[RMDB]
RNA sequence: GGGAACGACUCGAGUAGAGUCGAAAAUAUUUAGCUUUACUAAUCAAGACGCCGUCGUGCAGCCCACAAAAGUCUAGAUACGUCACAGGAGAGCAUACGCUAGGUCGCGUUGACUAUCCUUAUAUAUAUUGACUGUCAUUUUCGAAUGACAGUCAAUAAAAGAAACAACAACAACAAC
Reactivity to DMS in 0.01 (KOAc 150mM, MgCl2 10mM, bicine 150mM(pH8.5), 24C), signal-to-noise 2, nucleotides 027 to 126: u010a090u030u000u020a080g000c110u000u000u010a050c030u030a150a050u020c070a100a110g010a110c040g020c040c070g020u000c020g010u010g000c060a120g010c060c030c050a110c120a020a040a050a060g000u000c020u000a030g030a050u050a060c290g010u030c050a060c170a070g000g000a000g000a020g000c040a080u010a030c060g000c000u000a100g000g040u030c160g000c040g020u000u000g010a060c030u040a080u000c010c000u000u090a060u040a120u020a060u010
Reactivity to 2A3 in 0.01 (KOAc 150mM, MgCl2 10mM, bicine 150mM(pH8.5), 24C), signal-to-noise 4, nucleotides 027 to 126: u200a050u040u240u060a020g000c010u030u050u020a010c010u070a060a090u080c060a010a010g010a040c020g030c070c020g110u100c000g030u040g030c020a010g030c000c010c000a060c020a000a070a010a010g010u020c010u040a000g030a040u080a110c120g070u080c070a080c030a070g020g030a040g000a000g000c000a020u070a210c020g010c030u060a060g140g080u220c030g000c000g010u000u010g020a040c010u010a030u030c000c000u070u010a100u000a000u010a000u000